[RMDB]
RNA sequence: GGGAACGACUCGAGUAGAGUCGAAAAGAUAUGGACGAUUCUUGUGUCCCGAUGAAAGUGUUCGGAAACGAACACUGGAGGGAGACAAGAGAUCGUCCUAAGUCAAAGCUCAACUUCGGUUGAGCAACCUCCAACUCAAGUUCGCUUGAGUUGGAGGAAAAGAAACAACAACAACAAC
Reactivity to DMS in 0.01 (KOAc 150mM, MgCl2 10mM, bicine 150mM(pH8.5), 24C), signal-to-noise 2, nucleotides 027 to 126: g010a050u000a300u000g000g010a000c000g000a000u000u000c000u010u000g010u000g000u000c000c000c000g000a140u010g000a220a090a000g000u000g000u000u000c000g040g010a150a120a240c010g000a010a010c000a000c000u000g000g000a030g010g010g000a000g000a000c000a010a020g010a040g000a000u000c010g020u010c000c000u000a000a040g010u000c030a140a100a130g000c000u010c000a000a000c000u020u010c300g010g020u000u000g000a010g010c000a040a080
Reactivity to 2A3 in 0.01 (KOAc 150mM, MgCl2 10mM, bicine 150mM(pH8.5), 24C), signal-to-noise 2, nucleotides 027 to 126: g030a030u070a050u210g000g000a000c000g020a010u020u010c020u010u010g020u010g240u000c000c000c030g300a300u040g000a040a020a020g000u020g000u000u000c010g000g040a110a080a070c000g000a010a010c000a000c000u000g010g020a020g000g000g000a030g050a010c010a000a010g010a070g010a010u010c000g000u000c000c000u000a100a000g020u010c030a060a160a000g010c010u000c010a000a010c000u010u080c300g170g000u020u010g000a010g010c000a000a010
The record gives the reactivity of an RNA of 177 nucleotides to DMS and 2A3. 2A3 is a SHAPE reagent: it acylates the 2'-hydroxyl of flexible nucleotides of all four kinds. It was measured as part of the RMDB library TTRDES. The RNA was probed in 150 mM KOAc, 10 mM MgCl2 and 150 mM bicine (pH 8.5) at 24 C. The 2A3 profile rests on 3,874 reads.